Structure probing data (DMS and 2A3) for a 207-nucleotide construct. For DMS the reverse transcriptase was MarathonRT. For 2A3, 491 sequencing reads were counted. Values cover nucleotides 27 to 156. Conditions: 150 mM KOAc, 10 mM MgCl2 and 150 mM bicine (pH 8.5), 24 C.
RNA sequence: GGGAACGACUCGAGUAGAGUCGAAAAGCACAAGACUUCGAACAUUAUAGCAGUUAGUAGUUGCCUAAACCCAUUGCAAUAUAUGGGACUGUAGAGGUCGCAAGCCUAUACUGUGCGGUGAACAUUCAAAAGGGAUGGUACUUCGGUACCAUCCCAAGAGACAAAGAAGGUUCGCCUUCUUUGUCUCAAAAGAAACAACAACAACAAC
Reactivity to DMS in 0.01 (KOAc 150mM, MgCl2 10mM, bicine 150mM(pH8.5), 24C), signal-to-noise 2, nucleotides 027 to 156: g020c030a090c020a070a100g020a070c010u000u000c020g010a140a180c050a050u000u010a120u010a100g000c020a080g040u000u010a170g010u000a140g010u000u000g000c030c010u010a060a060a210c010c000c000a030u000u000g020c080a180a100u000a110u000a010u000g010g010g000a120c030u010g030u010a100g010a100g030g040u000c000g050c180a040a140g000c020c000u000a070u000a090c080u010g000u000g000c020g000g010u010g020a060a100c060a120u000u000c060a090a070a140a200g020g020g040a020u020g010g020u000a010c010u000u000c300g070g010u000a000c010c000a000u000c000c010c000a010a020
Reactivity to 2A3 in 0.01 (KOAc 150mM, MgCl2 10mM, bicine 150mM(pH8.5), 24C), signal-to-noise 1, nucleotides 027 to 156: g060c060a010c040a050a020g020a040c060u100u110c230g110a240a090c090a180u200u220a190u280a050g000c060a020g020u020u160a030g030u060a010g010u040u090g000c030c000u110a070a100a090c000c010c000a020u010u040g020c020a030a000u050a010u000a000u150g000g000g020a010c000u030g010u030a040g000a000g080g070u090c040g030c050a000a030g000c010c000u050a030u060a110c000u000g050u050g010c000g000g000u000g090a070a000c000a050u080u300c150a250a110a040a000g000g000g010a000u000g000g000u000a000c010u030u080c170g030g000u000a000c000c000a000u010c010c000c000a000a000